RNA sequence: GGGAACGACUCGAGUAGAGUCGAAAAGAUAUGGAUCCAUGGGCGCGAAGAACAUACGUAGUAGCUGACCUAUGUCGGAAACGACAUAGGUCAGCGAAAUGUAUGGGAGCGUAGUGGAUCCUAAGUCGAUUACAUACCUCUUCGGAGGUAUGUAAUCAAAAGAAACAACAACAACAAC
Reactivity to DMS in 0.01 (KOAc 150mM, MgCl2 10mM, bicine 150mM(pH8.5), 24C), signal-to-noise 2, nucleotides 027 to 126: g000a090u000a300u010g030g000a030u000c000c000a030u000g020g020g010c010g030c020g010a110a170g020a180a160c010a010u000a000c000g010u010a080g030u010a150g010c000u020g000a000c000c020u010a000u000g020u000c000g010g010a130a120a230c010g000a020c000a010u000a000g000g040u000c000a000g000c000g000a030a100a150u020g010u000a000u000g000g000g010a110g000c010g010u000a300g030u000g000g000a030u000c000c010u000a020a090g010u000c090
Reactivity to 2A3 in 0.01 (KOAc 150mM, MgCl2 10mM, bicine 150mM(pH8.5), 24C), signal-to-noise 2, nucleotides 027 to 126: g050a050u160a080u220g000g020a000u000c040c000a040u070g230g300g010c040g030c030g280a300a090g040a120a070c010a000u010a000c000g000u000a010g040u020a000g000c010u010g000a000c000c000u010a000u000g000u010c010g060g030a040a090a070c030g000a000c000a000u020a020g000g000u010c000a000g020c000g000a000a020a000u000g000u000a000u000g010g000g010a030g000c010g000u000a030g000u000g000g000a000u000c000c000u010a050a000g090u020c070
Source information:
The record gives the reactivity of an RNA of 177 nucleotides to DMS and 2A3. Conditions: 150 mM KOAc, 10 mM MgCl2 and 150 mM bicine (pH 8.5), 24 C. DMS adducts were read by reverse transcription with MarathonRT. It was measured as part of the RMDB library TTRINS. As a SHAPE reagent, 2A3 marks flexible, mostly unpaired nucleotides at the ribose 2'-OH.